The record gives the reactivity of an RNA of 177 nucleotides to DMS and 2A3.
The RNA was probed in 150 mM KOAc, 10 mM MgCl2 and 150 mM bicine (pH 8.5) at 24 C.
The DMS profile rests on 2,194 reads.
Reactivities are given for positions 27 through 126.
[RMDB]
RNA sequence: GGGAACGACUCGAGUAGAGUCGAAAACAUGAAGAUGAUGAAGAUGGUCUUCUCCGUGGGCCUGGAGAUGAAGCAGUCCACCGUGUUGGGGCAGGGCCAGCGGUCGCAGCGGUAGAGCGGCUUCAGCCGAGAGUCUUACCUUCGGGUAAGACUCUCGAAAAGAAACAACAACAACAAC
Reactivity to DMS in 0.01 (KOAc 150mM, MgCl2 10mM, bicine 150mM(pH8.5), 24C), signal-to-noise 2, nucleotides 027 to 126: c050a070u010g000a060a050g020a060u000g010a080u000g000a080a080g010a080u000g010g010u000c020u000u000c010u000c020c030g010u000g000g000g020c080c040u010g000g000a100g000a070u000g010a080a080g010c070a050g000u000c020c030a070c050c040g010u010g000u000u010g020g010g020g030c070a050g000g000g000c020c020a080g010c060g010g020u000c040g030c060a040g000c040g000g000u010a060g010a060g030c030g010g000c030u000u010c040a100g000c130
Reactivity to 2A3 in 0.01 (KOAc 150mM, MgCl2 10mM, bicine 150mM(pH8.5), 24C), signal-to-noise 1, nucleotides 027 to 126: c020a050u090g050a090a020g030a050u170g000a020u090g060a090a030g110a110u100g070g070u020c000u100u000c030u030c020c000g040u080g000g060g000c000c070u050g030g020a140g010a100u110g030a050a020g020c020a020g010u000c010c010a000c000c030g060u030g110u130u180g030g020g020g020c020a020g050g010g000c020c000a000g000c000g050g000u030c070g000c110a040g060c000g010g000u020a020g000a020g040c000g050g000c040u050u040c020a020g000c030